The record gives the reactivity of an RNA of 177 nucleotides to DMS and 2A3. For 2A3 the reverse transcriptase was SuperScript II with manganese. The RNA was probed in 150 mM KOAc, 10 mM MgCl2 and 150 mM bicine (pH 8.5) at 24 C. DMS adducts were read by reverse transcription with MarathonRT.
RNA sequence: GGGAACGACUCGAGUAGAGUCGAAAAGAAAGAAAAGAAACUUCCGAUGUAGACCCUUAUUCUACGCAUGUACCACGGGUCGGUUUUAGUACAGGCGAUUUCUUCGCGCGAAAAUAGAAGCAAGAAAGGGAGUAGGUAAUUUCGAUUACCUACUCCCAAAAGAAACAACAACAACAAC
Reactivity to DMS in 0.01 (KOAc 150mM, MgCl2 10mM, bicine 150mM(pH8.5), 24C), signal-to-noise 2, nucleotides 027 to 126: g000a080a100a060g000a090a020a090a150g000a100a130a070c060u000u000c000c010g000a010u010g010u010a080g000a030c040c000c000u010u020a080u020u010c020u000a060c030g000c030a030u000g020u010a030c010c090a140c110g010g000g010u000c010g000g010u000u020u000u010a100g040u030a030c080a100g010g010c010g000a140u010u030u000c050u000u000c190g010c100g000c060g000a030a030a080a100u020a050g010a090a100g010c110a070a050g020a040a110a120
Reactivity to 2A3 in 0.01 (KOAc 150mM, MgCl2 10mM, bicine 150mM(pH8.5), 24C), signal-to-noise 1, nucleotides 027 to 126: g020a000a120a000g070a040a050a000a030g080a190a060a000c010u000u000c100c040g010a010u180g070u060a120g000a000c000c000c050u250u130a200u250u050c010u000a000c000g000c050a020u110g000u020a020c000c000a020c100g080g040g040u000c170g000g000u150u220u000u190a010g010u000a000c000a010g050g030c020g010a000u000u120u100c000u070u000c010g000c000g040c080g000a000a070a020a000u060a000g190a000a000g240c060a040a040g010a150a030a020